[RMDB]
RNA sequence: GGGAACGACUCGAGUAGAGUCGAAAACGUCGUGAACUAGCGACAAUGCAUUAGGUCCAUCGUUAUCUAACCGAAACAUCGUGACUAGUGGUAGAAUAGAACCAUGAGAGGCCGCUGGCAAACAAAGACGGAGUGUAUUAUUCGUAGUACGCUCCGUAAAAGAAACAACAACAACAAC
Reactivity to 2A3 in 0.01 (KOAc 150mM, MgCl2 10mM, bicine 150mM(pH8.5), 24C), signal-to-noise 5, nucleotides 027 to 126: c050g000u010c000g020u040g050a070a030c050u010a050g000c000g000a000c000a010a050u050g000c010a020u020u070a030g020g010u010c010c010a050u030c020g020u010u030a050u030c020u000a030a050c010c010g010a030a010a010c020a040u060c040g040u040g060a050c010u020a020g020u000g010g000u020a030g020a060a020u060a050g060a030a010c000c010a020u010g020a040g020a030g030g020c000c000g000c020u000g030g000c000a010a020a010c020a030a080a010g070
Reactivity to DMS in 0.01 (KOAc 150mM, MgCl2 10mM, bicine 150mM(pH8.5), 24C), signal-to-noise 9, nucleotides 027 to 126: c120g010u010c050g010u010g010a100a120c100u020a120g000c020g010a050c060a110a070u040g000c060a080u020u010a070g000g000u000c010c020a080u020c070g010u010u000a090u010c060u020a090a080c100c070g010a090a070a090c090a070u010c070g010u010g000a060c040u000a060g020u000g000g010u010a050g010a080a090u030a090g000a080a090c040c020a040u000g010a110g010a100g000g020c020c020g000c030u010g000g010c040a050a080a060c110a060a090a100g010

The record gives the reactivity of an RNA of 177 nucleotides to 2A3 and DMS. It was measured as part of the RMDB library OK1LIB. The reactions ran in a buffer of 150 mM KOAc, 10 mM MgCl2 and 150 mM bicine (pH 8.5), at 24 C. For 2A3, 24,959 sequencing reads were counted. DMS adducts were read by reverse transcription with MarathonRT. 2A3 adducts were read by reverse transcription with SuperScript II with manganese. For DMS, 32,864 sequencing reads were counted.